[RMDB]
RNA sequence: GGGAACGACUCGAGUAGAGUCGAAAACCUCGAUCCACCUUCGAGAGGGUUCACAUCCCCAACUCGCGGGCCGGCUACUCUUCUUUUCCUUUCCUCAUCUUCCCUGGUCAGCCUUCCGAGUUCCUCUUCUUCCUCCUUGCUGAGGCUCUUCCCUCCUCUAAUCUCACUUGUUCGCAAGUGAGAUUAGAAAAGAAACAACAACAACAAC
Reactivity to 2A3 in 0.01 (KOAc 150mM, MgCl2 10mM, bicine 150mM(pH8.5), 24C), signal-to-noise 3, nucleotides 027 to 156: c000c000u020c030g040a030u020c030c060a050c030c040u040u080c030g030a040g020a050g090g030g020u190u190c130a080c020a160u210c020c010c010c000a050a070c010u000c020g040c000g020g020g000c050c060g050g020c010u090a060c030u020c010u130u040c020u120u140u080u100c020c010u050u080u070c010c020u120c020a160u040c060u060u020c010c010c000u020g050g020u070c020a030g010c000c000u130u070c030c020g000a000g050u020u030c010c000u050c000u090u020c000u060u050c020c000u020c020c000u070u060g010c070u040g050a010g010g000c010u030c000u020u000c000c000c000u030c030c000u000